RNA sequence: GGGAACGACUCGAGUAGAGUCGAAAACAUUCCGACUUGAGGGACAGAAAACAAUCGGGCUUGAAAUUCUCGAACGAUUUUACGAGGAGUAUGGUCGAUUCCCUGAUCGAAUUAUCCUUCCGGUUGGUAAUGCCGGUAAUACUUCAGCUUUAUAUAACUCUCAGAUAUUCUUCGGAAUAUCUGAGAGAAAAGAAACAACAACAACAAC
Reactivity to DMS in 0.01 (KOAc 150mM, MgCl2 10mM, bicine 150mM(pH8.5), 24C), signal-to-noise 1, nucleotides 027 to 156: c040a080u000u000c010c020g020a080c050u000u000g060a100g000g020g030a200c020a120g010a090a120a140a150c090a110a090u000c020g050g040g010c120u020u000g000a030a040a120u040u040c020u010c030g010a070a090c020g000a210u000u010u000u000a080c060g000a090g060g000a090g000u010a100u000g020g010u000c020g020a270u000u010c030c010c000u000g000a110u000c030g000a160a090u020u000a080u000c040c020u000u000c040c020g000g000u010u020g010g040u000a030a050u000g010c030c000g020g000u000a060a110u000a040c080u020u000c080a040g000c010u000u010u030a160u000a140u010a080a240
Reactivity to 2A3 in 0.01 (KOAc 150mM, MgCl2 10mM, bicine 150mM(pH8.5), 24C), signal-to-noise 4, nucleotides 027 to 156: c030a030u070u050c020c000g030a030c060u040u070g050a010g000g030g000a000c040a080g240a040a110a030a030c080a010a020u050c030g030g030g010c000u040u080g060a090a180a140u180u020c040u020c040g010a070a070c050g070a110u020u060u070u260a040c010g000a020g080g000a030g030u040a060u100g010g060u030c000g060a110u020u080c030c000c000u050g010a030u040c020g010a020a060u080u020a050u110c020c000u080u000c020c000g040g010u040u060g040g050u130a070a020u080g030c030c000g000g040u060a100a070u050a080c020u070u100c040a020g070c040u070u160u070a160u160a030u140a160a060